[RMDB]
RNA sequence: GGGAACGACUCGAGUAGAGUCGAAAAACUGGAAGUGAGAAUUGGAGGAAAACAAACUGAUUGCUGGUUGAUGCUUGCAACAGUGUGGCAAACAAUUAAUAUUCAGAUUGUUUUUCUCCAAUAUCUCACCUUCAGGAAAGGGUGCGUUCGCGCACCCCGUCACCACAGUGUUCGCACUGUGGUGACGAAAAGAAACAACAACAACAAC
Reactivity to 2A3 in 0.01 (KOAc 150mM, MgCl2 10mM, bicine 150mM(pH8.5), 24C), signal-to-noise 3, nucleotides 027 to 156: a000c000u000g010g000a000a000g000u010g000a000g010a010a020u000u000g000g000a010g010g040a000a000a010a000c010a020a020a030c000u000g010a010u020u090g020c090u090g040g000u040u030g010a060u030g010c050u160u160g020c050a130a160c080a300g180u090g010u050g160g000c010a050a150a120c000a060a030u030u080a050a040u050a050u110u010c000a000g030a040u000u000g000u000u000u000u000u000c000u000c000c000a010a000u020a000u000c000u000c000a000c000c000u000u000c000a000g010g030a020a090a050g000g010g000u010g000c000g040u060u070c190g020c010g010c120a000c010c000c000

Description
The record gives the reactivity of an RNA of 207 nucleotides to 2A3. For 2A3, 1,744 sequencing reads were counted. The RNA was probed in 150 mM KOAc, 10 mM MgCl2 and 150 mM bicine (pH 8.5) at 24 C. It was measured as part of the RMDB library RFM130. 2A3 adducts were read by reverse transcription with SuperScript II with manganese.